Source information
Chemical mapping of a 177-nucleotide RNA with DMS. Values cover nucleotides 27 to 126. The reactions ran in a buffer of 150 mM KOAc, 10 mM MgCl2 and 150 mM bicine (pH 8.5), at 24 C. DMS adducts were read by reverse transcription with MarathonRT.
RNA sequence: GGGAACGACUCGAGUAGAGUCGAAAACAUUGGCAUUUCGAUGCCAAUGGGUCUGCGUCGCGCGGCCCCCGAGUCGUUCCCGCGGCCGCGUGACGCAGUUUGGGCAGCUCGAGUUCGCUCGAGCUAAUAUAGUGACUGCAUUCGUGCAGUCACUAUAAAAAGAAACAACAACAACAAC
Reactivity to DMS in 0.01 (KOAc 150mM, MgCl2 10mM, bicine 150mM(pH8.5), 24C), signal-to-noise 1, nucleotides 027 to 126: c010a010u000u010g010g000c000a020u000u000u010c170g010a040u000g010c000c000a010a000u000g000g000g010u000c000u000g000c000g020u000c010g000c000g000c010g010g010c000c020c300c080c080g000a040g010u000c000g010u000u000c010c000c020g040c130g010g010c010c010g030c020g010u000g000a010c010g030c010a000g010u000u000u000g010g020g030c200a080g000c000u010c000g010a020g010u000u020c230g040c000u000c000g000a020g010c010u000a010a030